[RMDB]
RNA sequence: GGGAACGACUCGAGUAGAGUCGAAAAGGGUAACGGGGCAGAAGUUGAAUGGCUCAUCUGAGCCAGUUCGUCGGAGGAAUGAACUGUGAGCGUUACGGCAACAUUUGCGGAAGAGGCGGUACUUGGCGGCAUCCUACUGGACAACAUGAGGUUCCACCAAUUCUUCUCCAUUCGUGGAGAAGAAUUGAAAAGAAACAACAACAACAAC
Reactivity to DMS in 0.01 (KOAc 150mM, MgCl2 10mM, bicine 150mM(pH8.5), 24C), signal-to-noise 1, nucleotides 027 to 156: g010g020g020u010a080a060c040g010g000g000g020c040a130g010a050a100g000u000u000g010a080a120u000g020g020c010u010c000a210u000c240u000g000a060g010c040c000a040g030u000u000c020g030u000c030g020g020a070g040g000a090a070u000g000a030a060c050u020g040u010g000a100g040c010g020u000u010a100c080g010g000c000a080a060c000a130u000u000u000g000c070g050g000a060a060g010a050g020g010c030g010g010u000a040c040u000u020g000g010c060g020g030c040a030u000c030c010u000a080c060u000g000g000a110c040a040a050c070a110u010g010a080g000g020u000u000c000c020a080c180
Reactivity to 2A3 in 0.01 (KOAc 150mM, MgCl2 10mM, bicine 150mM(pH8.5), 24C), signal-to-noise 4, nucleotides 027 to 156: g010g000g020u050a070a000c080g010g000g030g000c030a020g010a110a030g050u130u110g040a060a070u080g000g000c030u010c030a200u110c190u260g020a000g010c000c000a000g010u020u040c020g060u000c040g040g070a050g010g030a100a080u110g000a030a020c040u050g010u040g100a020g030c030g030u060u080a010c040g030g000c010a020a040c010a150u100u090u180g030c040g000g020a030a020g020a050g040g020c030g030g000u040a060c030u020u050g010g040c030g010g010c010a030u020c000c010u040a070c040u050g040g010a010c010a100a000c020a120u140g030a000g010g030u030u000c020c010a050c030